Chemical mapping of a 177-nucleotide RNA with 2A3 and DMS. For DMS, 722 sequencing reads were counted. The reactions ran in a buffer of 150 mM KOAc, 10 mM MgCl2 and 150 mM bicine (pH 8.5), at 24 C. The data come from the RNA Mapping Database (RMDB), library RFM100.
[RMDB]
RNA sequence: GGGAACGACUCGAGUAGAGUCGAAAAGGCAAUGUGGUGUUCGGACUGACAACCACUCCGCGAAAGGCUGCAAGAAGUCUCUUGGAAUAGAGCACGAAACAGGGUGAUAGUCCCGUACUGCAGGCGAGAUCGCGACGUAUUUCGAUACGUCGCGAUCAAAAGAAACAACAACAACAAC
Reactivity to 2A3 in 0.01 (KOAc 150mM, MgCl2 10mM, bicine 150mM(pH8.5), 24C), signal-to-noise 1, nucleotides 027 to 126: g100g060c120a090a060u170g020u100g000g000u010g180u080u300c090g070g140a270c070u070g000a000c000a060a040c040c000a020c000u030c020c010g000c020g050a070a040a000g100g030c000u040g000c000a000a000g000a010a010g000u050c000u000c000u000u010g000g000a000a000u000a000g000a000g000c000a000c000g000a030a030a030c040a020g010g000g000u000g000a000u000a000g000u020c010c000c000g000u040a000c000u000g060c010a000g000g060c000g000a060
Reactivity to DMS in 0.01 (KOAc 150mM, MgCl2 10mM, bicine 150mM(pH8.5), 24C), signal-to-noise 1, nucleotides 027 to 126: g010g010c190a100a300u000g000u000g050g000u010g030u000u000c000g010g030a140c060u090g000a050c150a000a130c000c040a000c080u050c090c030g000c060g000a300a260a120g010g060c000u000g140c000a000a000g000a000a000g040u000c000u010c000u000u000g000g090a300a000u000a090g010a060g000c060a000c000g000a140a260a090c000a300g000g000g000u000g000a230u130a000g000u000c000c000c000g000u000a170c060u000g000c040a000g000g010c100g000a090